The record gives the reactivity of an RNA of 207 nucleotides to DMS and 2A3. DMS adducts were read by reverse transcription with MarathonRT. For 2A3 the reverse transcriptase was SuperScript II with manganese.

RNA sequence: GGGAACGACUCGAGUAGAGUCGAAAACCACCGGCUUCGGCCGGUGGAUAAGUCCUAAGUCCAACAGCGGACCCAUAGGCAUCGAUCUACUCGGAAACGAGUAGGGAGCCUAUGGUCCGACAUGGAUAUGGAAUUUGCGAGUAUUUCGAUACUCGAAAUAGCAAUACUGGUUCGCCAGUAUUGCUAUAAAAGAAACAACAACAACAAC
Reactivity to DMS in 0.01 (KOAc 150mM, MgCl2 10mM, bicine 150mM(pH8.5), 24C), signal-to-noise 1, nucleotides 027 to 156: c020c000a030c040c010g030g010c000u000u010c300g030g030c040c040g000g040u010g000g020a010u010a000a070g000u000c000c030u000a080a240g040u000c010c030a060a050c100a210g010c000g000g000a040c050c060c090a010u000a010g010g050c020a240u000c150g010a060u000c000u000a010c000u030c000g010g010a170a140a270c010g000a000g010u000a000g010g000g020a080g010c010c000u000a010u000g010g000u000c020c000g010a010c020a250u010g000g000a040u010a260u010g010g000a090a150u000u000u010g000c010g000a010g020u010a160u000u010u010c130g010a260u010a020c040u000c040g000a020a090
Reactivity to 2A3 in 0.01 (KOAc 150mM, MgCl2 10mM, bicine 150mM(pH8.5), 24C), signal-to-noise 2, nucleotides 027 to 156: c000c000a000c010c000g030g010c020u060u230c300g170g020c000c010g000g000u000g000g000a010u030a100a030g030u010c010c000u020a080a050g030u000c010c000a030a050c080a190g070c010g010g020a050c140c010c020a010u000a000g020g000c010a180u300c080g050a030u000c000u000a000c000u020c000g020g030a070a090a030c000g000a000g000u000a000g000g010g000a000g000c000c020u000a000u000g000g010u000c000c000g000a040c020a110u060g000g000a010u030a070u080g010g040a090a170u140u120u270g100c010g000a010g020u010a000u030u180u110c180g140a010u030a000c000u000c000g000a030a170
The RNA was probed in 150 mM KOAc, 10 mM MgCl2 and 150 mM bicine (pH 8.5) at 24 C. It was measured as part of the RMDB library RNAMAK.